[RMDB]
RNA sequence: GGGAACGACUCGAGUAGAGUCGAAAACGCUGGGAUCUCAGACUGGUGAUGGCAAGCUGAAGCGCGCACGGUGAUGACCCAUCAGAAGGUCUAGGAUCCUGUGCUGAAGCGCGCACGGCAACCGAAAGGUGCGGACGGCAUCUGUUCGCAGAUGCAAUAACGCUAUACCAUUCGUGGUAUAGCGUUAAAAAGAAACAACAACAACAAC
Reactivity to DMS in 0.01 (KOAc 150mM, MgCl2 10mM, bicine 150mM(pH8.5), 24C), signal-to-noise 3, nucleotides 027 to 156: c090g030c020u010g000g000g010a030u000c030u000c000a050g010a050c000u000g020g050u000g010a050u000g030g000c010a070a210g020c010u000g030a030a100g020c010g000c020g030c010a300c040g010g040u030g000a130u010g000a060c300c020c000a060u000c040a100g010a180a250g040g010u000c000u010a070g010g010a030u000c030c000u000g040u010g000c020u010g020a110a060g010c020g000c000g030c000a300c000g020g000c030a070a170c020c000g000a090a110a160g000g010u000g000c000g000g020a130c050g020g000c010a030u000c020u000g020u000u010c250g060c020a010g010a030u000g010c000a120a240
Reactivity to 2A3 in 0.01 (KOAc 150mM, MgCl2 10mM, bicine 150mM(pH8.5), 24C), signal-to-noise 4, nucleotides 027 to 156: c050g000c030u060g000g000g000a000u010c070u040c030a010g010a010c000u120g110g160u150g150a040u020g020g000c100a140a110g000c060u030g050a170a040g030c020g000c000g000c010a030c030g020g050u030g060a270u170g090a170c000c050c010a000u010c010a030g300a300a040g010g010u000c010u030a050g030g000a000u000c000c010u000g010u050g000c030u070g010a130a050g000c000g000c010g020c010a020c000g050g000c030a050a060c000c020g070a080a040a030g030g010u030g000c030g020g050a060c060g090g000c000a000u000c000u010g090u080u090c240g000c120a000g010a010u010g010c000a000a030